Chemical mapping of a 177-nucleotide RNA with DMS and 2A3.
Conditions: 150 mM KOAc, 10 mM MgCl2 and 150 mM bicine (pH 8.5), 24 C.
As a SHAPE reagent, 2A3 marks flexible, mostly unpaired nucleotides at the ribose 2'-OH.
It was measured as part of the RMDB library OK2TRN.
RNA sequence: GGGAACGACUCGAGUAGAGUCGAAAAGGAUCCUUCGUAGUCAGGGUAACUGCCACCAGUACAGUUACCAGUGAUGACUAGUCAAUGUGUCAUCGUACUGGUGGAUGACGUAUUGACUUAAGGAUCGCUACAUCAAUGUAUUCGUACAUUGAUGUAGAAAAGAAACAACAACAACAAC
Reactivity to DMS in 0.01 (KOAc 150mM, MgCl2 10mM, bicine 150mM(pH8.5), 24C), signal-to-noise 9, nucleotides 027 to 126: g000g000a010u000c000c000u000u000c190g020u000a050g010u000c000a040g010g000g010u000a010a010c010u000g010c120c040a080c300c240a030g000u010a220c010a020g000u000u000a010c010c000a080g010u010g000a110u000g000a050c040u000a050g000u000c010a010a010u000g010u000g000u000c010a010u000c010g030u010a150c140u000g000g010u000g010g000a010u000g000a010c020g010u000a020u000u000g000a010c000u000u010a020a010g020g000a010u000c000g010
Reactivity to 2A3 in 0.01 (KOAc 150mM, MgCl2 10mM, bicine 150mM(pH8.5), 24C), signal-to-noise 9, nucleotides 027 to 126: g030g000a000u000c010c000u010u050c110g090u050a010g010u000c030a030g020g020g030u010a010a010c010u020g020c020c020a050c020c020a010g040u110a020c000a010g010u010u010a010c000c010a010g030u030g060a080u030g010a020c010u010a020g010u010c000a010a020u020g020u000g000u010c000a000u000c020g060u090a070c050u040g150g030u020g060g000a000u000g010a000c010g010u020a020u000u020g000a010c010u010u040a010a000g000g000a000u000c000g010

DMS adducts were read by reverse transcription with MarathonRT.